[RMDB]
RNA sequence: GGGAACGACUCGAGUAGAGUCGAAAAAAGGGUGAUGUGGUGCCCUUGGACAAAAAUAUUAAAUGCUAGUCCGGCCUUCUCACAGGCUGGGCGACACACUCAAACUGCGGGAAACCCCUAAAGCCUUCACUACCAAGCUUGUGUUUCGAAAGGACAUGCUUGAUUAUAAGUUCGCUUAUAAUCAAGCAAAAGAAACAACAACAACAAC
Reactivity to 2A3 in 0.01 (KOAc 150mM, MgCl2 10mM, bicine 150mM(pH8.5), 24C), signal-to-noise 3, nucleotides 027 to 156: a000a010g050g000g020u050g060a150u070g010u030g060g070u040g000c000c000c000u000u030g050g000a040c080a030a090a020a040a020u190a090u200u210a100a110a040u110g030c010u020a020g010u010c000c000g020g000c010c000u170u040c180u040c110a080c070a050g000g010c000u010g010g000g000c000g000a000c000a000c000a000c010u040c030a080a130a100c060u080g030c060g020g030g010a050a120a090c020c000c000c010u050a120a040a020g020c010c000u030u060c020a010c070u110a040c010c040a080a010g020c040u050u050g040u010g020u060u000u040c020g060a120a100a040g100g020a030c020a070u070